[RMDB]
RNA sequence: GGGAACGACUCGAGUAGAGUCGAAAACUAGGCAGUGUGGGUGCUCGAGCGGGAUGCACUGAGAACAGGUCACGACCGGGAAGUCCUUGCUCGAGGAUGAAGAGUCAAGGGCUCACCUACACGUGACGCGGGUAUCAAGCUUCGGCUUGGUACCCGCAAAAGAAACAACAACAACAAC
Reactivity to 2A3 in 0.01 (KOAc 150mM, MgCl2 10mM, bicine 150mM(pH8.5), 24C), signal-to-noise 3, nucleotides 027 to 126: c050u060a070g050g130c070a080g020u010g010u020g040g040g020u070g060c050u030c040g020a010g030c030g020g000g000a020u060g120c170a010c060u050g010a020g000a240a090c030a040g090g000u040c050a010c060g040a070c040c040g000g000g010a010a010g010u000c000c000u090u230g020c000u000c000g000a030g030g030a060u160g060a030a030g000a010g110u220c090a060a090g050g010g000c000u010c020a050c000c010u000a000c010a010c040g040u020g000a030c070
Reactivity to DMS in 0.01 (KOAc 150mM, MgCl2 10mM, bicine 150mM(pH8.5), 24C), signal-to-noise 2, nucleotides 027 to 126: c050u000a090g000g030c040a080g000u000g010u040g010g020g030u000g010c020u000c030g010a040g010c020g000g000g000a040u000g000c270a160c020u020g000a120g060a140a090c140a120g020g000u010c100a040c030g020a110c120c100g000g000g000a120a070g000u010c000c000u040u040g000c000u000c000g000a060g000g060a030u010g050a120a100g000a010g000u000c030a050a000g000g000g000c000u020c130a000c000c000u010a110c120a080c000g030u000g040a100c110
Annotation
Chemical mapping of a 177-nucleotide RNA with 2A3 and DMS. The RNA was probed in 150 mM KOAc, 10 mM MgCl2 and 150 mM bicine (pH 8.5) at 24 C.